[RMDB]
RNA sequence: GGGAACGACUCGAGUAGAGUCGAAAACUCACAAACAGAAUCGACGGGAACGAGGUCACAAAAGUCCCAGCGAGAGAGCGCGUUCAAAUCUCAGACUAUUCCGCUUCCUACCGUUCUAUCAAGUGGAUGGUUCGGAACUGACAGGGUCAUGCCGCCACAGGAGGAAGGAAUUCGUUCCUUCCUCCUGAAAAGAAACAACAACAACAAC
Reactivity to 2A3 in 0.01 (KOAc 150mM, MgCl2 10mM, bicine 150mM(pH8.5), 24C), signal-to-noise 2, nucleotides 027 to 156: c020u010c010a060c070a040a190a000c040a050g110a040a100u070c040g040a080c030g020g020g020a060a000c020g030a070g040g090u090c040a040c000a140a120a030a000g030u030c020c010c000a000g020c050g010a030g000a010g020a020g070c030g000c040g060u070u060c050a100a090a090u120c090u050c050a020g020a050c030u070a120u150u030c010c020g040c070u020u010c000c000u010a080c020c000g040u080u050c010u070a190u180c070a130a050g040u050g080g010a040u030g000g000u030u110c040g000g020a030a000c030u030g040a040c020a100g000g030g000u010c030a050u110g030c020c010g040c050c020a030
Reactivity to DMS in 0.01 (KOAc 150mM, MgCl2 10mM, bicine 150mM(pH8.5), 24C), signal-to-noise 1, nucleotides 027 to 156: c010u010c030a110c030a220a100a210c130a140g000a170a070u000c000g000a080c050g020g020g010a050a100c030g020a070g010g060u010c070a070c050a050a050a050a110g040u010c010c000c020a130g020c030g000a060g010a050g020a040g030c030g000c030g040u000u000c040a050a070a160u010c020u000c030a130g010a110c000u010a080u000u000c000c010g000c000u000u000c010c030u000a060c050c030g110u000u000c000u000a240u010c080a060a090g010u000g040g010a060u000g000g010u000u010c000g070g000a060a110c020u010g010a040c100a110g040g010g010u000c050a080u010g000c010c000g000c050c050a260